Conditions: 150 mM KOAc, 10 mM MgCl2 and 150 mM bicine (pH 8.5), 24 C.
Chemical mapping of a 207-nucleotide RNA with DMS and 2A3.
It was measured as part of the RMDB library OK3TST.
[RMDB]
RNA sequence: GGGAACGACUCGAGUAGAGUCGAAAAAGACUUAUUCACUAUCACGAGUACAGCAUGGGAAAGACCUACCCCUAUUAUUCAAUUACCUCCCACUGGGUCCCUCCCACAACAUAUGGGAAUUCAAGAUGAGAUUUGGGUGGGGACACAGCCAAACCAAAAUUAUCGAUGAUUUCGAUCAUCGAUAAUUAAAAGAAACAACAACAACAAC
Reactivity to DMS in 0.01 (KOAc 150mM, MgCl2 10mM, bicine 150mM(pH8.5), 24C), signal-to-noise 1, nucleotides 027 to 156: a090g010a240c010u010u010a040u010u000c010a170c040u010a160u010c060a080c070g010a090g000u000a020c140a150g020c060a050u000g010g020g040a110a130a110g020a150c010c010u020a080c070c010c010c060u000a120u000u000a080u010u000c030a070a140u000u000a090c030c040u000c000c000c050a230c050u010g010g030g010u000c010c000c020u000c000c010c000a120c090a080a160c080a110u010a070u000g020g020g010a120a110u010u010c060a030a100g000a070u000g000a130g000a160u000u000u020g040g010g000u020g020g030g110g020a020c020a020c030a030g000c040c010a040a060a050c040c010a000a120
Reactivity to 2A3 in 0.01 (KOAc 150mM, MgCl2 10mM, bicine 150mM(pH8.5), 24C), signal-to-noise 3, nucleotides 027 to 156: a000g020a020c020u050u060a060u160u080c020a030c100u140a090u120c040a010c080g050a010g030u060a060c030a060g030c030a130u090g010g000g030a080a120a020g050a030c010c010u030a070c030c020c000c020u030a120u130u000a100u110u150c050a070a120u120u060a120c010c020u000c000c000c000a030c000u000g020g000g000u010c000c000c000u000c010c040c000a020c010a070a000c000a010u100a050u130g040g020g110a070a050u170u180c030a070a010g040a100u100g010a010g030a110u050u040u100g040g000g000u110g000g000g000g000a000c020a000c000a010g050c020c010a040a080a040c050c040a120a120

The DMS profile rests on 1,784 reads. Reactivities are given for positions 27 through 156. Values are in units of 0.01, from 0 to 300, in steps of 10. 2A3 adducts were read by reverse transcription with SuperScript II with manganese.